[RMDB]
RNA sequence: GGGAACGACUCGAGUAGAGUCGAAAACGUCGACGAACGCCGUGCCGGCGAACGACAGGGCGGCGGCGUUGAGAUCGAUGCGGUUCGUGCGCGGUGCCAGGGAUUCGACGUCGUCGCCGGGCGCCCACGUAGCAUCGGGUUUCGACCCGAUGCUACGAAAAGAAACAACAACAACAAC
Reactivity to DMS in 0.01 (KOAc 150mM, MgCl2 10mM, bicine 150mM(pH8.5), 24C), signal-to-noise 1, nucleotides 027 to 126: c140g020u000c020g030a180c040g010a040a230c020g010c010c020g020u000g020c120c060g000g030c010g040a040a200c030g000a080c050a160g030g000g000c010g030g010c020g000g000c000g000u010u010g000a080g010a060u010c030g000a170u020g030c060g020g040u000u000c090g000u000g030c120g000c030g000g000u000g010c030c010a160g010g010g010a020u000u000c020g000a000c000g020u000c020g000u000c000g010c010c000g000g000g000c020g020c010c010c010a120
Reactivity to 2A3 in 0.01 (KOAc 150mM, MgCl2 10mM, bicine 150mM(pH8.5), 24C), signal-to-noise 1, nucleotides 027 to 126: c010g040u010c020g000a140c020g020a110a030c010g000c000c010g120u230g300c100c220g010g010c030g000a070a070c030g070a020c020a050g100g000g080c000g000g000c000g000g000c000g000u020u030g050a090g000a040u020c030g080a110u140g030c000g070g000u080u130c070g030u100g080c160g030c040g080g110u090g030c000c030a070g080g080g000a000u050u030c000g020a000c000g030u050c030g010u020c000g020c020c000g020g010g000c000g020c000c000c000a080